[RMDB]
RNA sequence: GGGAACGACUCGAGUAGAGUCGAAAAGAUAUGGAGAGGUAAACGAGCGUGCUCAUCGGAAACGAUGAGGGCGCGAUGAGUUUACUACCCACCUCCUAAGUCAAAGAAAUGGGUUCGCCCAUUUCAACUCUCUCUAAGUGUUCGCACUUAGAGAGAGAAAAGAAACAACAACAACAAC
Reactivity to 2A3 in 0.01 (KOAc 150mM, MgCl2 10mM, bicine 150mM(pH8.5), 24C), signal-to-noise 2, nucleotides 027 to 126: g020a000u150a020u240g000g000a030g020a040g010g050u010a000a010a020c020g030a040g060c030g010u080g180c020u010c010a000u000c010g010g010a040a080a020c010g000a010u010g010a010g010g060g000c000g000c010g000a040u020g020a000g000u000u010u000a010c010u060a080c040c030c000a110c000c000u000c000c010u020a090a040g060u070c110a170a080a170g000a010a020a010u010g010g050g000u050u080c300g130c000c000c000a000u000u020u000c010a000a010
Reactivity to DMS in 0.01 (KOAc 150mM, MgCl2 10mM, bicine 150mM(pH8.5), 24C), signal-to-noise 3, nucleotides 027 to 126: g000a100u000a070u000g000g010a010g010a200g000g010u010a010a010a010c000g000a090g010c010g040u000g000c000u000c020a010u000c000g020g000a110a050a140c020g020a020u010g000a020g010g000g010c000g050c000g000a070u010g000a180g010u000u000u000a010c000u000a130c100c060c070a300c240c010u000c000c010u000a080a120g000u010c110a040a080a140g000a000a010a010u000g000g000g020u000u010c260g010c000c000c000a000u000u000u010c000a090a150
The data come from the RNA Mapping Database (RMDB), library TTRDEL. An RNA of 177 nucleotides, treated with 2A3 and DMS and read out base by base. The RNA was probed in 150 mM KOAc, 10 mM MgCl2 and 150 mM bicine (pH 8.5) at 24 C.